The data come from the RNA Mapping Database (RMDB), libraries RFM100 and RFMREP. Chemical mapping of a 177-nucleotide RNA with 2A3 and DMS. The RNA was probed in 150 mM KOAc, 10 mM MgCl2 and 150 mM bicine (pH 8.5) at 24 C. 2A3 adducts were read by reverse transcription with SuperScript II with manganese.
[RMDB]
RNA sequence: GGGAACGACUCGAGUAGAGUCGAAAAACGCAGGCUACGGCCUGCGACCCUGACAGAAUGUUCCACGUAGAACAAUCUGACACUAGCCACGACAGGAGAUACUCAUGACGCGAGCUACGGCUCGCGAAUUAUGUGGUAGGUUCGCCUACCACAUAAUAAAAGAAACAACAACAACAAC
Reactivity to 2A3 in 0.01 (KOAc 150mM, MgCl2 10mM, bicine 150mM(pH8.5), 24C), signal-to-noise 9, nucleotides 027 to 126: a000c010g000c000a000g000g010c010u040a080c300g120g000c000c000u000g000c000g000a000c000c000c000u010g050a030c010a030g040a060a070u060g040u030u020c060c030a180c240g100u260a130g000a030a000c020a020a080u010c010u010g020a010c010a020c090u100a050g060c040c020a070c060g110a040c050a060g060g030a060g050a060u140a100c030u050c080a080u160g100a060c030g000c000g010a000g000c010u040a060c260g070g000c010u000c000g000c000g000a010
Reactivity to DMS in 0.01 (KOAc 150mM, MgCl2 10mM, bicine 150mM(pH8.5), 24C), signal-to-noise 7, nucleotides 027 to 126: a190c020g000c010a020g000g010c010u000a120c170g030g010c000c000u000g000c010g000a010c010c000c010u010g000a130c040a010g000a050a060u010g000u000u000c010c060a150c280g010u030a120g000a020a020c020a030a030u000c020u010g010a150c050a050c150u020a060g000c050c030a080c090g010a070c090a060g010g000a090g000a120u010a040c070u000c060a090u010g000a150c020g020c000g000a020g020c010u000a110c170g030g010c000u000c010g010c000g000a010